[RMDB]
RNA sequence: GGGAACGACUCGAGUAGAGUCGAAAAGAUAUGGAAAGUCACGGGAGCCGUUCGGAAACGAACGAAGCAUCGAUCGUGGACUUUCCUAAGUCAAACGACAAGACAGAGUUCGCUCUGUCUUGUCGAACAUGUAGGAUUUCUUCGGAAAUCCUACAUGAAAAGAAACAACAACAACAAC
Reactivity to 2A3 in 0.01 (KOAc 150mM, MgCl2 10mM, bicine 150mM(pH8.5), 24C), signal-to-noise 3, nucleotides 027 to 126: g000a010u070a020u140g000g010a010a000a000g000u020c010a010c010g030g070g010a010g020c000c000g000u000u000c010g000g010a050a040a030c010g000a000a000c020g050a080a030g010c010a190u260c040g160a110u070c010g010u110g040g050a010c000u000u000u010c010c000u000a100a020g030u000c040a130a010a110c030g000a000c000a000a000g000a000c000a000g020a000g030u090u160c200g090c100u000c000u000g000u000c010u000u000g000u000c000g000a000a010
Reactivity to DMS in 0.01 (KOAc 150mM, MgCl2 10mM, bicine 150mM(pH8.5), 24C), signal-to-noise 6, nucleotides 027 to 126: g010a050u000a300u000g000g000a000a010a010g000u000c000a010c010g010g010g000a080g040c010c010g010u000u000c000g010g000a080a070a180c010g000a010a010c000g000a100a080g030c020a240u000c130g010a090u010c010g010u000g020g020a020c000u000u000u000c000c000u000a020a070g000u000c040a090a090a250c020g000a010c000a010a010g000a000c000a010g000a010g010u000u010c280g010c000u000c000u000g000u010c000u000u000g000u000c000g000a040a120